[RMDB]
RNA sequence: GGGAACGACUCGAGUAGAGUCGAAAAGAUAUGGAGUGAACUACAGUCCUGAGUCCAAUGAUGUCGGAAACGAUUGAGGACGAAAGGACUGCACUCCUAAGUCAAAAUCGCGCGUUCGCGCGCGAAACCUUGUAGGUGAGUUCGCUCACCUACAAGGAAAAGAAACAACAACAACAAC
Reactivity to 2A3 in 0.01 (KOAc 150mM, MgCl2 10mM, bicine 150mM(pH8.5), 24C), signal-to-noise 2, nucleotides 027 to 126: g000a020u070a060u130g030g000a000g010u000g030a170a130c160u180a060c300a050g000u030c000c000u070g030a020g000u000c040c010a090a250u220g140a040u150g030u000c020g020g040a120a080a050c010g010a000u020u090g020a020g020g000a000c000g030a000a020a000g000g020a000c000u000g000c010a000c000u000c000c010u020a100a010g010u000c040a000a010a010a300u010c000g000c000g000c020g030u070u050c230g010c030g000c020g010c000g260a000a010a010
Reactivity to DMS in 0.01 (KOAc 150mM, MgCl2 10mM, bicine 150mM(pH8.5), 24C), signal-to-noise 3, nucleotides 027 to 126: g010a020u020a300u000g000g010a000g020u000g010a080a030c100u020a300c000a010g000u000c000c000u000g000a300g010u000c000c000a070a190u000g020a120u010g000u010c000g000g010a100a120a120c030g000a020u000u000g010a100g020g000a000c000g010a070a100a000g000g000a000c000u000g000c000a010c010u010c000c000u000a040a110g000u000c050a090a080a060a090u000c000g000c000g020c010g050u010u020c290g000c000g030c010g030c000g000a040a070a100